[RMDB]
RNA sequence: GGGAACGACUCGAGUAGAGUCGAAAAUUGCGCAUACCGUGCUCGCCGUGCCGAUCGCUCAGCAGCGCGCGCAAAUGCAUCUGGACACGGUGUGCACGAUGGUCGACACCGAUACGAUGGUGAUGUAUCCCGGCGAAGCUUUCGAGCUUCGCCGGGAAAAAGAAACAACAACAACAAC
Reactivity to 2A3 in 0.01 (KOAc 150mM, MgCl2 10mM, bicine 150mM(pH8.5), 24C), signal-to-noise 2, nucleotides 027 to 126: u050u080g010c050g000c040a040u050a180c090c000g000u000g000c030u030c020g000c000c010g040u000g000c000c000g010a030u030c070g000c000u060c060a060g000c010a030g070c050g080c040g010c020g000c060a060a120a000u070g000c000a000u010c050u220g040g020a100c020a000c000g000g010u000g000u000g000c000a010c000g000a020u050g000g040u070c010g030a040c000a020c020c010g010a020u090a220c080g080a100u130g020g040u030g000a040u060g050u060a110
Reactivity to DMS in 0.01 (KOAc 150mM, MgCl2 10mM, bicine 150mM(pH8.5), 24C), signal-to-noise 3, nucleotides 027 to 126: u000u000g000c040g000c050a100u010a030c090c020g010u000g010c010u000c010g020c000c060g080u000g000c020c010g010a040u020c150g010c030u000c110a300g000c020a080g030c070g030c140g000c090g040c040a050a060a100u010g020c020a030u010c030u020g030g000a130c000a010c010g010g010u010g010u000g000c010a000c010g000a020u000g020g010u010c030g020a130c010a060c030c000g010a130u010a070c190g010a090u000g010g000u010g000a080u010g010u020a180
This 177-nucleotide RNA was probed chemically with 2A3 and DMS. The reactions ran in a buffer of 150 mM KOAc, 10 mM MgCl2 and 150 mM bicine (pH 8.5), at 24 C. 2A3 adducts were read by reverse transcription with SuperScript II with manganese. DMS (dimethyl sulfate) methylates the pairing face of unpaired adenines and cytosines. For DMS the reverse transcriptase was MarathonRT.